This 177-nucleotide RNA was probed chemically with DMS and 2A3. The DMS profile rests on 931 reads.
RNA sequence: GGGAACGACUCGAGUAGAGUCGAAAAGAUAUGGAGAGAGAGACUUUUGACGCUCGGCGGUUCGGAAACGAACCCGAGAGCGAUAAGUCUCCUCUCCUAAGUCAAAAUCCCAGCUUCGGCUGGGAAAGUCCUAGUAAUCGUUCGCGAUUACUAGGACAAAAGAAACAACAACAACAAC
Reactivity to DMS in 0.01 (KOAc 150mM, MgCl2 10mM, bicine 150mM(pH8.5), 24C), signal-to-noise 1, nucleotides 027 to 126: g000a050u000a290u010g000g010a050g020a000g020a190g010a040g000a050c000u000u010u000u000g050a260c150g010c000u000c000g040g010c300g010g020u000u000c020g040g000a050a050a220c010g000a010a000c010c000c060g000a250g000a000g020c000g010a030u000a020a010g000u000c000u000c000c000u000c000u000c020c000u020a000a010g010u000c030a080a140a110a200u010c000c010c000a010g000c010u000u020c210g050g000c000u000g010g000g000a020a000a030
Reactivity to 2A3 in 0.01 (KOAc 150mM, MgCl2 10mM, bicine 150mM(pH8.5), 24C), signal-to-noise 2, nucleotides 027 to 126: g000a000u080a010u080g010g000a000g020a040g020a010g000a010g010a020c020u110u140u240u270g300a300c250g030c010u060c030g010g070c240g030g000u020u000c000g020g000a030a080a060c010g000a010a010c070c010c000g190a190g010a020g080c000g010a010u040a010a000g000u080c000u000c000c000u000c010u000c000c010u000a010a010g020u010c000a000a000a000a300u030c000c010c000a000g000c050u040u120c300g220g000c060u000g000g000g000a060a060a010
Annotation
The 2A3 profile rests on 1,724 reads.